[RMDB]
RNA sequence: GGGAACGACUCGAGUAGAGUCGAAAAAAAAAAAGAUAUGGAUCCACGGGAAGCGGUGGGCCGAGACUCUUCGGAAACGAAGAGUUAUCCCACCGAACUACUUCCCGUGGAUCCUAAGUCAAAAAAACUAAUAGAUUAGGUUCGCCUAAUCUAUUAGAAAAGAAACAACAACAACAAC
Reactivity to DMS in 0.01 (KOAc 150mM, MgCl2 10mM, bicine 150mM(pH8.5), 24C), signal-to-noise 1, nucleotides 027 to 126: a000a000a090a130a030a020a160g000a020u010a270u000g000g000a030u000c000c010a000c010g040g020g040a030a010g000c030g000g000u010g000g070g010c300c080g000a090g000a030c000u020c000u010u000c000g000g010a060a060a080c000g010a020a000g030a010g010u000u000a030u000c020c000c010a010c020c000g000a030a020c090u010a290c000u000u000c000c000c000g010u000g000g000a000u000c000c000u000a000a090g000u010c010a000a000a060a120a100a010a190
The data come from the RNA Mapping Database (RMDB), library TTRDES. Structure probing data (DMS) for a 177-nucleotide construct. Reactivities are rounded to 0.1 and cut off at 0 and 3. The DMS profile rests on 1,171 reads.